An RNA of 177 nucleotides, treated with 2A3 and read out base by base. Source: RMDB library OK1LIB, as collected in RNAgym. 2A3 is a SHAPE reagent: it acylates the 2'-hydroxyl of flexible nucleotides of all four kinds. The RNA was probed in 150 mM KOAc, 10 mM MgCl2 and 150 mM bicine (pH 8.5) at 24 C.

[RMDB]
RNA sequence: GGGAACGACUCGAGUAGAGUCGAAAAGCACUCCAGUACGCUGGAGUGCAAGAAACUGGAAGGCGCGGCGAGCUGCAGCCGCAGUGAAUCAAAUGCAGCAAAACGGAUGGUCUACGGACCAUCCGAAGCGUGGUCAGCCAUUCGUGGCUGACCACGCAAAAGAAACAACAACAACAAC
Reactivity to 2A3 in 0.01 (KOAc 150mM, MgCl2 10mM, bicine 150mM(pH8.5), 24C), signal-to-noise 1, nucleotides 027 to 126: g000c020a000c000u000c000c000a010g040u060a050c260g020c000u000g000g000a000g000u000g030c020a000a000g000a000a060a000c040u060g070g060a050a020g170g080c120g000c020g050g020c020g010a060g000c000u000g000c000a000g010c000c040g000c000a000g110u120g100a070a010u230c030a040a000a040u090g000c000a030g000c000a000a000a000a110c000g000g000a000u000g000g000u000c000u060a120c230g080g000a000c000c000a020u000c000c000g000a000a020